[RMDB]
RNA sequence: GGGAACGACUCGAGUAGAGUCGAAAAUAUAUCUUAAUGAUGAUACAUUUCCUUCAGUGCAUAGUUCAACUGAUAAGGAUAACUUCCUAUAUGAAGAUAAAAAUUCAUCGAAUUUAGUCUUUCGCUCCUUACAUGGGUGUUUCGACACCCAUGUAAGAAAAGAAACAACAACAACAAC
Reactivity to 2A3 in 0.01 (KOAc 150mM, MgCl2 10mM, bicine 150mM(pH8.5), 24C), signal-to-noise 5, nucleotides 027 to 126: u100a010u000a000u000c020u050u190a160a080u280g110a020u040g020a000u010a050c050a090u050u050u020c000c000u000u000c000a010g010u030g030c020a090u110a220g090u140u170c050a090a030c040u000g010a050u050a200a040g000g010a000u040a050a090c040u000u050c000c020u040a040u020a060u300g030a000a030g020a010u140a030a130a020a030a030u110u050c080a090u050c200g020a030a030u040u100u070a040g020u010c000u030u120u030c040g010c030u030c020
Reactivity to DMS in 0.01 (KOAc 150mM, MgCl2 10mM, bicine 150mM(pH8.5), 24C), signal-to-noise 3, nucleotides 027 to 126: u000a140u050a010u000c010u000u040a190a100u030g030a090u010g020a020u030a030c170a080u020u020u000c040c000u000u000c000a000g010u000g020c090a230u030a180g000u060u010c110a130a030c020u010g050a150u020a070a030g010g010a080u010a030a150c160u000u000c000c050u000a150u000a040u010g010a020a020g000a060u010a000a090a100a020a030u000u000c000a080u040c150g000a100a020u010u000u000a210g000u000c030u000u010u000c080g000c090u020c120